[RMDB]
RNA sequence: GGGAACGACUCGAGUAGAGUCGAAAACACUACCUUCUUAAAUGGACAAAUUGCGUCUAGCAAUAAUGAGAUUGAGCAAUAACAGGUCUGUGAUGCCCUUAGAUGCACGCGCGCUACAAUAAUAUUUCUUUGGUAGUACCUUCGGGUACUACCAAAGAAAAGAAACAACAACAACAAC
Reactivity to 2A3 in 0.01 (KOAc 150mM, MgCl2 10mM, bicine 150mM(pH8.5), 24C), signal-to-noise 2, nucleotides 027 to 126: c020a040c060u120a070c000c000u060u130c060u000u140a080a070a130u220g000g020a000c010a020a150a120u000u000g000c010g070u030c110u130a000g040c090a000a090u160a150a080u120g180a080g060a130u090u060g040a000g040c060a060a040u080a130a010c010a030g070g050u000c030u040g080u040g030a110u110g000c000c090c000u020u100a110g040a130u260g000c000a040c010g080c000g000c000g000c000u110a110c040a090a020u210a280a030u030a080u130u000u000